[RMDB]
RNA sequence: GGGAACGACUCGAGUAGAGUCGAAAACAAGGCUUGCAGCAAGGCGCCAUUAGUUCAUUAGCAUUCAAGAGAGAGUUGCUUUUAGGCAGUUUUAGAGUUGCGCUUCACACACAAGUUGCAGCAUUGCUUCAUUGCGCCAGCUUAGAGUUGCCACAAGCCACUUGCUUUGUUUCGACAAAGCAAGUGGAAAAGAAACAACAACAACAAC
Reactivity to 2A3 in 0.01 (KOAc 150mM, MgCl2 10mM, bicine 150mM(pH8.5), 24C), signal-to-noise 2, nucleotides 027 to 156: c060a030a020g020g000c010u060u060g030c040a010g000c030a060a120g030g000c010g010c080c060a030u060u060a030g030u040u070c020a030u070u000a010g010c050a060u030u010c080a200a010g040a000g030a010g010a030g130u030u130g050c010u100u040u010u090a010g030g040c070a060g050u020u040u080u130a060g010a010g010u020u040g010c020g000c000u070u130c060a120c020a010c000a000c020a130a090g020u090u070g140c000a020g010c070a080u130u160g000c000u020u030c010a060u000u120g000c010g010c030c020a020g030c010u010u010a030g000a010g030u050u010g050c030c010a010c010a020a020g020